Record summary:
Structure probing data (DMS and 2A3) for a 207-nucleotide construct. For DMS the reverse transcriptase was MarathonRT. The reactions ran in a buffer of 150 mM KOAc, 10 mM MgCl2 and 150 mM bicine (pH 8.5), at 24 C. For 2A3 the reverse transcriptase was SuperScript II with manganese. For 2A3, 3,484 sequencing reads were counted.
RNA sequence: GGGAACGACUCGAGUAGAGUCGAAAAGCGUACUACGACGAGGACAGAGCUAGAAGUGUAAGCCUCCUUCCCAAAUAGGAAGGAGGAUAACACUUCUUGGACCUCUGUCUCCCCACCGUCGUAUCGCAAAACGAGCGCUAGUUCGCUAGCGCUCGAACAUGUAUAAGGCGUUCGCGCCUUAUACAUGAAAAGAAACAACAACAACAAC
Reactivity to DMS in 0.01 (KOAc 150mM, MgCl2 10mM, bicine 150mM(pH8.5), 24C), signal-to-noise 1, nucleotides 027 to 156: g030c010g020u000a070c060u000a000c010g000a030c160g000a270g000g010a040c000a030g000a020g010c030u000a020g000a030a010g010u000g030u010a140a110g000c030c000u060c020c000u000u010c010c010c000a070a130a190u010a070g020g000a020a010g050g000a030g030g010a000u000a060a050c010a010c010u000u000c000u000u010g020g000a100c290c030u020c000u010g020u000c040u000c070c020c030c050a280c080c020g010u020c010g010u000a010u010c000g000c010a070a050a060a150c000g000a000g030c000g000c020u000a010g010u000u010c300g030c000u010a040g010c000g020c010u010c000g000a020a160
Reactivity to 2A3 in 0.01 (KOAc 150mM, MgCl2 10mM, bicine 150mM(pH8.5), 24C), signal-to-noise 3, nucleotides 027 to 156: g040c030g030u100a090c040u000a000c020g000a000c000g010a010g010g010a000c000a000g000a020g000c010u010a000g000a010a020g010u000g020u050a300a160g030c000c000u010c000c000u020u000c030c040c040a210a290a140u300a060g000g010a000a010g000g010a000g000g000a000u000a010a000c000a000c000u010u000c000u010u020g000g050a050c030c000u010c000u010g000u000c000u030c010c000c000c000a040c010c020g000u000c000g000u020a070u300c020g000c010a010a030a030a070c020g000a000g000c000g000c010u010a000g020u070u080c260g000c160u000a000g000c010g000c000u000c000g000a000a000